[RMDB]
RNA sequence: GGGAACGACUCGAGUAGAGUCGAAAAGAGUCUGAUGAAGCAAGACUCGGCUGAUACAAUCCUCCUAGAGAAAGGGGUCAGAGAGAGCAGCCCUGCCUGGAGCACUGCACAGGGCUGACUGCACCACACUGCCAAUAUUUUUCGAAAUAUUGGCAGUAAAAGAAACAACAACAACAAC
Reactivity to 2A3 in 0.01 (KOAc 150mM, MgCl2 10mM, bicine 150mM(pH8.5), 24C), signal-to-noise 9, nucleotides 027 to 126: g010a000g000u000c010u010g080a120u170g140a170a040g100c080a070a020g020a010c000u000c000g010g000c020u020g020a030u040a190c040a100a070u060c000c010u030c000c010u120a080g010a020g030a160a090a020g030g010g010g000u020c040a010g030a020g010a010g010a010g090c010a000g000c000c000c000u020g030c010c040u060g060g050a100g060c090a070c180u130g000c050a020c020a040g000g000g000c000u000g020a060c000u030g010c010a020c020c000a040c010
Reactivity to DMS in 0.01 (KOAc 150mM, MgCl2 10mM, bicine 150mM(pH8.5), 24C), signal-to-noise 9, nucleotides 027 to 126: g010a020g000u000c010u000g010a140u030g010a140a120g020c080a160a040g000a020c000u000c010g010g020c050u000g010a070u020a070c130a100a110u020c050c020u010c030c030u000a110g010a150g010a070a100a070g000g010g000g000u000c020a020g010a080g000a140g010a100g010c010a020g000c000c000c010u000g010c140c070u020g000g000a120g010c150a060c060u010g010c110a130c020a010g000g000g020c010u000g000a030c020u000g000c080a110c050c050a100c200